[RMDB]
RNA sequence: GGGAACGACUCGAGUAGAGUCGAAAAGAGUACACAUGUUAGAUGCGAAAUGCCGACGGAACUGGAAACAGAAGCAUCGAUUAGUAGUGGAAACGUCGGUAAACACUACGACUUGUGUACGAAGAAAGGGUAUACUAUAGUUCGCUAUAGUAUACCCAAAAGAAACAACAACAACAAC
Reactivity to 2A3 in 0.01 (KOAc 150mM, MgCl2 10mM, bicine 150mM(pH8.5), 24C), signal-to-noise 9, nucleotides 027 to 126: g100a010g000u000a000c000a010c000a000u020g020u050u070a050g000a010u010g010c010g050a050a130a110u060g020c000c000g010a000c010g040g070a140a130c090u170g060g090a130a100a000c020a020g020a050a010g000c000a000u010c000g010a030u060u150a010g000u010a000g000u000g030g020a040a030a010c010g000u000c000g000g010u010a040a000a000c010a000c000u000a000c000g000a000c000u000u000g000u000g000u010a000c010g010a040a010g080a050a050a010
Reactivity to DMS in 0.01 (KOAc 150mM, MgCl2 10mM, bicine 150mM(pH8.5), 24C), signal-to-noise 5, nucleotides 027 to 126: g010a230g010u000a000c000a010c010a010u000g020u000u010a050g010a010u000g010c000g000a070a090a120u010g010c000c000g010a010c010g010g020a070a140c110u000g010g010a160a130a130c060a010g010a090a150g000c000a010u000c000g000a130u030u010a070g030u000a010g000u000g000g000a080a070a040c010g010u000c010g000g000u010a020a060a100c010a010c000u010a010c000g010a040c020u000u000g000u000g010u000a000c000g000a090a090g000a100a100a060

Chemical mapping of a 177-nucleotide RNA with 2A3 and DMS.